RNA sequence: GGGAACGACUCGAGUAGAGUCGAAAAAUGACGGUGGCGGGCAAAAAGUUUUUCCUCUGUCGCGACGUAAGGCUGCCCAGCGUAGAUUACAAUUCAGUGGCCGCGAAAUUCAAAUCUCUCCUCGCAUUGAAUCUAAUAAAAAUUGCACAAUAUAAAAGAAGUUAAAUCAUUUCGAUGAUUUAACUUCAAAAGAAACAACAACAACAAC
Reactivity to 2A3 in 0.01 (KOAc 150mM, MgCl2 10mM, bicine 150mM(pH8.5), 24C), signal-to-noise 1, nucleotides 027 to 156: a000u010g030a010c000g020g000u040g030g000c100g000g060g000c000a000a000a000a000a170g090u080u000u020u020u060c010c040u080c000u040g000u090c000g040c010g010a030c030g040u040a040a030g070g020c020u070g010c000c030c000a040g050c060g000u010a000g030a040u060u170a160c140a080a090u000u070c010a060g040u070g110g000c080c030g020c020g010a110a000a000u100u140c060a080a140a110u000c070u000c000u000c000c000u000c000g000c000a000u000u060g010a060a030u080c060u040a080a080u130a040a150a160a000a020u130u130g000c080a000c020a070a040u270a040u300a260a170a080a050
Structure probing data (2A3) for a 207-nucleotide construct.
The reactions ran in a buffer of 150 mM KOAc, 10 mM MgCl2 and 150 mM bicine (pH 8.5), at 24 C.
The 2A3 profile rests on 456 reads.
Reactivities are given for positions 27 through 156.
The data come from the RNA Mapping Database (RMDB), library OK3TST.